[RMDB]
RNA sequence: GGGAACGACUCGAGUAGAGUCGAAAACAAAAAGCGCACUAGUCGCGUAACUAGCAAACAAAAAGACCAGCAUUGUCGUAAAUGCCAAACAAAAAGCCCAGUAGUGGCGUAACUACCAAACAACAAAGGGUAUCUAAUUCUUCGGAAUUAGAUACCCAAAAGAAACAACAACAACAAC
Reactivity to 2A3 in 0.01 (KOAc 150mM, MgCl2 10mM, bicine 150mM(pH8.5), 24C), signal-to-noise 2, nucleotides 027 to 126: c070a000a130a050a020a000g050c030g000c000a020c010u010a000g000u020c000g040c010g030u010a000a020c000u020a020g060c060a110a180a000c110a010a070a020a210a000g080a020c000c010a000g110c000a030u030u050g000u090c060g090u050a030a030a030u080g000c000c000a000a180a020c010a000a180a060a000a000g010c030c000c000a000g050u050a000g000u010g010g040c020g020u030a030a000c020u020a040c020c010a000a080a040c130a060a060c060a120a180a120
Reactivity to DMS in 0.01 (KOAc 150mM, MgCl2 10mM, bicine 150mM(pH8.5), 24C), signal-to-noise 1, nucleotides 027 to 126: c030a060a040a240a080a000g080c020g000c000a160c040u000a000g000u030c020g000c000g040u090a000a010c070u000a040g000c080a100a040a040c210a050a060a010a030a110g000a060c090c080a200g000c000a060u000u050g000u000c140g000u040a110a250a070u040g000c000c090a110a000a020c150a030a000a100a060a000g000c040c020c270a110g000u000a090g030u000g000g080c030g000u000a070a010c040u000a000c010c240a040a070a180c180a100a150c190a040a000a050